[RMDB]
RNA sequence: GGGAACGACUCGAGUAGAGUCGAAAAGAUAUGGAGCCACACCGGAACAACAGCUCGGAAACGAGACAUGUUCGGGUGGGCUCCUAAGUCAAACAGAAAAAAUUAGGUUCGCCUAAUUUUUUCUGAAGAACUAGACCAUGUUCGCAUGGUCUAGUUCAAAAGAAACAACAACAACAAC
Reactivity to 2A3 in 0.01 (KOAc 150mM, MgCl2 10mM, bicine 150mM(pH8.5), 24C), signal-to-noise 1, nucleotides 027 to 126: g030a030u080a050u100g000g000a000g010c020c000a300c000a020c080c010g170g010a030a020c020a030a010c000a060g050c010u000c000g030g010a060a050a050c000g000a000g070a050c080a110u050g020u060u000c040g090g000g000u030g000g030g020c000u000c000c010u020a000a000g010u010c030a020a100a110c020a020g030a000a010a000a000a000a020u050u020a030g060g000u070u060c300g210c090c010u020a000a010u010u020u000u000u010u000c010u040g000a020a030
Reactivity to DMS in 0.01 (KOAc 150mM, MgCl2 10mM, bicine 150mM(pH8.5), 24C), signal-to-noise 2, nucleotides 027 to 126: g010a050u000a300u000g000g000a010g010c000c000a140c000a010c000c010g010g050a030a000c000a030a090c300a170g010c010u000c000g000g000a090a080a230c010g000a000g010a050c070a190u000g000u000u010c000g000g020g000u000g000g010g010c010u000c000c000u010a000a040g010u000c020a100a110a300c010a000g000a000a000a050a000a000a020u000u000a010g010g010u010u000c300g070c000c000u000a000a000u000u000u000u000u000u000c000u010g010a030a080